[RMDB]
RNA sequence: GGGAACGACUCGAGUAGAGUCGAAAACGAUCAGUACGUUCGCGUACUGAUCGAAGCUACUGGAGACAGUAGCAAGUCUAAGACCUUGUUAGGCGGAAACAAGGAAAAAUGGAGGAAGGCCUUACCUCCAUACUUAGACAACCGCCAAGAGGCCAACCCCUUUUAGCGAUUUCGAUCGCUAAAAGGGAAAAGAAACAACAACAACAAC
Reactivity to 2A3 in 0.01 (KOAc 150mM, MgCl2 10mM, bicine 150mM(pH8.5), 24C), signal-to-noise 2, nucleotides 027 to 156: c020g000a000u000c000a010g000u010a000c000g030u070u040c220g000c000g110u000a000c000u000g000a000u000c000g000a010a000g000c000u000a010c000u000g000g000a050g000a050c000a000g000u000a000g010c000a010a010g010u000c000u000a000a040g010a140c000c000u020u010g010u010u040a150g080g090c090g080g060a050a010a000c000a000a000g030g000a080a120a010a010a010u030g000g000a000g000g010a130a140g030g010c000c000u020u060a070c030c000u000c000c000a000u010a020c010u000u000a010g000a010c020a040a050c130c020g080c050c010a020a020g040a010g020g020c000c000a010a020c000
This 207-nucleotide RNA was probed chemically with 2A3.
Values cover nucleotides 27 to 156.